An RNA of 177 nucleotides, treated with 2A3 and DMS and read out base by base. The RNA was probed in 150 mM KOAc, 10 mM MgCl2 and 150 mM bicine (pH 8.5) at 24 C. 2A3 adducts were read by reverse transcription with SuperScript II with manganese.
RNA sequence: GGGAACGACUCGAGUAGAGUCGAAAAACGUGAGUUACGACUCACGAACUGGUAACACUGGGGUUCUGAGACAGACAGUGUUAGCUCCAGAAGCAUUGCCUGUCUUAGAACCCCUAUGUUACCAGAACCGAUGCUACUUAUUCGUAAGUAGCAUCGGAAAAGAAACAACAACAACAAC
Reactivity to 2A3 in 0.01 (KOAc 150mM, MgCl2 10mM, bicine 150mM(pH8.5), 24C), signal-to-noise 2, nucleotides 027 to 126: a000c010g000u000g000a000g020u050u080a120c270g020a000c080u000c000a000c000g000a040a030c000u000g000g010u000a000a000c010a000c030u010g010g000g000g020u000u000c000u010g010a000g010a000c000a020g000a010c000a010g020u000g040u030u030a010g070c050u080c110c020a050g080a130a010g000c000a010u000u000g010c000c000u000g000u010c000u000u010a000g000a000a010c000c000c000c000u000a000u000g000u000u000a000c000c000a000g000a000a000
Reactivity to DMS in 0.01 (KOAc 150mM, MgCl2 10mM, bicine 150mM(pH8.5), 24C), signal-to-noise 2, nucleotides 027 to 126: a100c000g000u000g010a010g000u000u010a130c260g000a070c000u010c010a010c000g010a070a090c020u000g000g000u000a000a000c000a000c030u000g000g020g000g050u000u000c000u000g000a010g000a010c000a010g010a020c000a000g010u010g000u000u000a050g010c050u020c080c160a080g040a170a070g000c000a010u010u010g000c050c010u000g010u000c010u000u010a020g000a000a000c010c010c000c000u000a000u000g000u000u000a000c000c000a000g000a090a080
For 2A3, 3,786 sequencing reads were counted.